[RMDB]
RNA sequence: GGGAACGACUCGAGUAGAGUCGAAAAGAUAUGGAGAUAUCCAGAACUACAGAGACAUAUCGGAAACGAUAUGGUUCUGCUGGAGUAUCUCCUAAGUCAAAGCCGAGAAUCUUCGGAUUCUCGGCAACAUAUAUAAGUAGUUCGCUACUUAUAUAUGAAAAGAAACAACAACAACAAC
Reactivity to DMS in 0.01 (KOAc 150mM, MgCl2 10mM, bicine 150mM(pH8.5), 24C), signal-to-noise 6, nucleotides 027 to 126: g010a030u010a300u020g000g010a010g020a010u000a020u000c000c010a010g000a100a060c130u030a300c020a020g000a020g000a020c000a000u000a000u000c000g000g000a140a100a220c000g010a000u000a000u000g000g000u000u000c000u000g000c000u000g000g000a050g010u000a010u000c000u000c000c010u000a010a090g000u010c040a090a140a140g010c010c000g010a010g000a010a010u000c000u000u020c240g030g000a010u000u000c000u000c000g000g010c010a000a020
Reactivity to 2A3 in 0.01 (KOAc 150mM, MgCl2 10mM, bicine 150mM(pH8.5), 24C), signal-to-noise 5, nucleotides 027 to 126: g030a020u060a070u140g000g000a000g000a000u010a010u020c010c010a000g050a170a140c300u300a100c150a050g040a000g010a010c000a000u010a000u000c000g010g010a070a030a030c010g000a000u000a000u010g010g000u030u010c010u030g100c010u010g000g010a050g160u040a010u000c000u010c000c000u010a070a010g010u000c050a170a150a000g000c010c000g000a000g000a000a010u020c040u150u270c300g090g000a000u010u000c000u000c010g000g000c000a000a000
An RNA of 177 nucleotides, treated with DMS and 2A3 and read out base by base. Conditions: 150 mM KOAc, 10 mM MgCl2 and 150 mM bicine (pH 8.5), 24 C. Source: RMDB library TTRDES, as collected in RNAgym. DMS adducts were read by reverse transcription with MarathonRT. For 2A3, 12,216 sequencing reads were counted.